Chemical mapping of a 177-nucleotide RNA with DMS and 2A3. Reactivities are given for positions 27 through 126. Source: RMDB libraries RFM100 and RFMREP, as collected in RNAgym. Conditions: 150 mM KOAc, 10 mM MgCl2 and 150 mM bicine (pH 8.5), 24 C.

RNA sequence: GGGAACGACUCGAGUAGAGUCGAAAACGCAUGCGUGGAACCUUUGUGGCUCCUCUGCCGAUCCAUACUGCGGAACUCCUAGCCGCUUGUUUUGCUCGCAGCCGGUCUGGAGCAAAGCUCAUCGGAAAUGUCUUGAUUGUUUCGACAAUCAAGACAUAAAAGAAACAACAACAACAAC
Reactivity to DMS in 0.01 (KOAc 150mM, MgCl2 10mM, bicine 150mM(pH8.5), 24C), signal-to-noise 4, nucleotides 027 to 126: c090g000c020a000u010g040c070g010u000g000g000a030a080c120c110u010u040u010g020u010g020g000c030u010c120c100u010c120u020g050c020c030g000a110u000c030c020a040u010a080c050u010g000c030g000g000a060a140c150u010c010c020u010a100g000c010c000g010c160u010u000g010u000u000u000u000g010c000u010c020g000c030a030g010c040c150g020g030u020c020u000g000g010a010g000c000a000a010a020g010c030u020c100a080u010c010g020g010a110a100
Reactivity to 2A3 in 0.01 (KOAc 150mM, MgCl2 10mM, bicine 150mM(pH8.5), 24C), signal-to-noise 8, nucleotides 027 to 126: c010g020c020a040u190g010c040g030u030g030g030a110a170c030c000u120u120u230g200u160g040g000c030u090c060c030u060c110u100g000c000c010g000a020u000c010c000a030u040a090c020u030g000c000g000g040a060a070c030u020c010c000u020a050g070c010c000g000c000u010u030g010u000u020u010u010g000c000u000c020g300c040a010g000c030c070g290g030u100c020u010g010g000a000g000c000a000a000a010g000c020u030c040a090u120c020g020g000a050a100